[RMDB]
RNA sequence: GGGAACGACUCGAGUAGAGUCGAAAAUUAAUCCGGCUUUAAGUUGACGAGGGCAGGGUUUAUCGAGACAUCGGCGGGUGCCCUGCCGUCUUCCUGCGACCGUUAGAGGACUGGUAAACCAAUUUAAGUAUUAACACUGAUUCGUCAGUGUUAAUACAAAAGAAACAACAACAACAAC
Reactivity to 2A3 in 0.01 (KOAc 150mM, MgCl2 10mM, bicine 150mM(pH8.5), 24C), signal-to-noise 4, nucleotides 027 to 126: u080u050a020a080u050c010c000g040g000c040u070u080u090a080a050g040u100u110g050a030c040g020a070g030g000g010c020a020g040g030g010u020u150u100a190u090c050g020a060g050a100c060a160u100c060g100g020c040g030g070g030u050g000c020c000c000u000g000c000c000g010u000c000u010u020c000c030u030g010c020g070a070c030c010g040u010u040a050g020a030g060g030a070c030u030g010g050u070a040a050a030c020c000a030a020u120u160u090a190a020
Reactivity to DMS in 0.01 (KOAc 150mM, MgCl2 10mM, bicine 150mM(pH8.5), 24C), signal-to-noise 8, nucleotides 027 to 126: u010u000a110a130u000c020c010g010g020c030u000u010u010a060a100g010u010u000g010a070c100g010a080g000g010g020c000a020g000g000g020u000u000u010a050u000c050g000a110g000a140c200a090u010c060g020g020c080g010g010g010u000g010c010c010c000u000g010c010c010g010u000c020u000u000c040c040u000g010c080g000a080c050c060g000u010u000a090g010a100g000g000a070c050u000g000g000u010a060a070a150c050c030a070a090u010u010u000a070a170
Notes: An RNA of 177 nucleotides, treated with 2A3 and DMS and read out base by base. The 2A3 profile rests on 5,672 reads. The data come from the RNA Mapping Database (RMDB), library M2PK90. For DMS, 12,485 sequencing reads were counted. Reactivities are rounded to 0.1 and cut off at 0 and 3. For 2A3 the reverse transcriptase was SuperScript II with manganese.